[RMDB]
Source: RMDB library RNAMAK, as collected in RNAgym.
The record gives the reactivity of an RNA of 207 nucleotides to 2A3.
The RNA was probed in 150 mM KOAc, 10 mM MgCl2 and 150 mM bicine (pH 8.5) at 24 C.

RNA sequence: GGGAACGACUCGAGUAGAGUCGAAAAGGGGUCGAAUCGAGAACACGCUCCAGGAGCUUGGAUUUAUGGGUCUGAAGCCUCCACGGACCCAUUGUCAGCUCCUGAAGCGUGACGAUUCGACGGAGGCACCCAAAACUCGGAAGUUCGCUUCCGAGAAGUCAAAAACGAUGUUCGCAUCGUUUUUGACAAAAGAAACAACAACAACAAC
Reactivity to 2A3 in 0.01 (KOAc 150mM, MgCl2 10mM, bicine 150mM(pH8.5), 24C), signal-to-noise 2, nucleotides 027 to 156: g020g000g000g030u010c000g010a010a000u000c000g010a000g050a280a110c010a000c000g010c010u030c010c000a000g010g000a000g000c240u300u300g060g000a050u170u300u200a020u080g000g010g000u030c010u010g030a080a020g000c010c000u000c000c000a030c000g000g000a000c010c000c000a000u000u010g000u000c030a030g000c010u010c000c000u010g000a010a000g000c000g000u000g000a010c000g000a000u000u010c000g000a000c000g000g010a000g000g000c010a030c010c040c000a050a080a050a090c000u000c000g000g000a020a000g030u070u100c180g120c130u000u000c000c000g000a000g000a030a020